Source: RMDB library OK3TST, as collected in RNAgym. This 207-nucleotide RNA was probed chemically with DMS and 2A3. Values cover nucleotides 27 to 156. The reactions ran in a buffer of 150 mM KOAc, 10 mM MgCl2 and 150 mM bicine (pH 8.5), at 24 C. For DMS the reverse transcriptase was MarathonRT. For 2A3, 494 sequencing reads were counted. 2A3 adducts were read by reverse transcription with SuperScript II with manganese.

[RMDB]
RNA sequence: GGGAACGACUCGAGUAGAGUCGAAAAGGUCUAUUCCCGAUUGUUCUGAUAAUGUAGUGCGGGUUCGUGCUCGAGAGAAGGUGGGGAUGAGUAGGCGAUGGCGCGAGUUUGUUUACGAGUUAACGUAUCCUCAAUAUGUUCUGUUGCUAGGAUUAAACGAUAAGGUUGUUUUCGAACAACCUUAUCGAAAAGAAACAACAACAACAAC
Reactivity to DMS in 0.01 (KOAc 150mM, MgCl2 10mM, bicine 150mM(pH8.5), 24C), signal-to-noise 1, nucleotides 027 to 156: g020g000u000c020u000a170u000u000c000c000c010g000a060u010u000g050u020u000c020u000g020a040u000a030a100u010g050u000a070g000u000g000c050g010g030g040u000u000c000g070u000g050c040u000c020g030a130g010a180g030a130a110g000g020u000g010g000g020g000a100u000g000a100g000u000a090g040g010c080g010a140u000g010g000c030g040c010g020a060g010u000u000u000g030u000u000u010a070c090g010a210g030u020u010a050a040c060g000u010a090u000c020c010u000c140a060a100u000a110u000g010u000u000c070u030g010u000u000g010c010u000a100g040g010a100u010u000a050a150a170
Reactivity to 2A3 in 0.01 (KOAc 150mM, MgCl2 10mM, bicine 150mM(pH8.5), 24C), signal-to-noise 1, nucleotides 027 to 156: g150g100u090c060u020a060u000u000c000c000c000g030a090u110u080g020u130u050c090u050g060a110u050a270a180u130g080u150a170g000u030g110c000g000g110g000u040u040c100g040u030g020c060u000c080g100a030g020a000g040a080a040g040g000u070g000g010g000g030a080u030g000a030g100u080a020g000g050c040g060a120u090g040g000c030g000c050g020a010g000u000u010u080g040u000u030u000a040c090g010a030g050u100u110a130a000c070g030u020a030u130c000c000u110c040a070a010u100a020u180g060u170u000c010u120g000u020u030g080c110u140a080g030g040a060u100u230a150a070a000